[RMDB]
RNA sequence: GGGAACGACUCGAGUAGAGUCGAAAAGCCACUUACGGACACUCCGUCUGACGUACAGUCUCACUCGCAUGACUAGUCUAAGUCAAGACUGUGAGCGAGUACGACUGAUGGUCAGUUCGAGUGUGGAGCUCGUAGUGACUUUCGAGUCACUACGAGCAAAAGAAACAACAACAACAAC
Reactivity to DMS in 0.01 (KOAc 150mM, MgCl2 10mM, bicine 150mM(pH8.5), 24C), signal-to-noise 1, nucleotides 027 to 126: g000c020c010a110c090u000u020a060c190g000g020a080c000a130c050u000c050c040g010u000c000u000g150a040c000g020u000a010c000a030g000u020c010u000c210a080c000u020c060g020c030a120u010g020a030c010u010a030g030u000c020u010a130a150g000u000c210a040a040g020a000c020u010g000u000g010a090g000c020g040a030g010u020a050c120g010a010c010u000g020a030u000g020g020u000c020a060g000u000u000c150g010a050g000u020g030u000g000g000a130
Reactivity to 2A3 in 0.01 (KOAc 150mM, MgCl2 10mM, bicine 150mM(pH8.5), 24C), signal-to-noise 3, nucleotides 027 to 126: g030c000c030a060c060u180u200a020c080g170g060a020c010a000c020u040c040c070g050u030c010u000g000a000c020g060u150a020c000a000g000u030c010u000c040a040c000u010c000g030c010a100u220g060a160c040u090a010g000u000c010u040a230a110g220u140c090a040a040g000a010c020u010g000u040g030a010g010c010g000a010g010u000a010c040g000a000c000u000g020a030u120g010g000u010c000a000g020u050u030c010g010a000g030u010g000u040g060g000a040